Annotation:
Structure probing data (DMS) for a 177-nucleotide construct. Conditions: 150 mM KOAc, 10 mM MgCl2 and 150 mM bicine (pH 8.5), 24 C. High DMS reactivity at an A or C suggests that its Watson-Crick edge is free. Source: RMDB library OK1LIB, as collected in RNAgym.

RNA sequence: GGGAACGACUCGAGUAGAGUCGAAAAGUGCGGAGUGAAAUUCAUAGGCGCCGCGCCAAUUUGGCGAAACGUCCCGGUACUCCGCGUAGUCGCGACGUAAACGUUCUGUGUUGGCGUUCAGGCCUCAAUCAUGGCCAGGAUUCGUCCUGGCCAUGAUAAAAGAAACAACAACAACAAC
Reactivity to DMS in 0.01 (KOAc 150mM, MgCl2 10mM, bicine 150mM(pH8.5), 24C), signal-to-noise 2, nucleotides 027 to 126: g010u020g000c080g000g010a010g010u040g020a070a080a060u050u030c070a140u020a080g010g000c090g000c110c170g050c000g040c010c000a080a060u010u020u020g000g000c020g020a140a030a110c040g030u000c030c080c030g000g000u000a050c000u000c000c020g020c030g000u040a030g000u000c080g010c130g000a010c000g000u000a090a100a190c030g000u000u010c070u010g000u000g000u000u010g000g000c150g020u030u000c100a070g010g040c010c000u020c100a190
DMS adducts were read by reverse transcription with MarathonRT.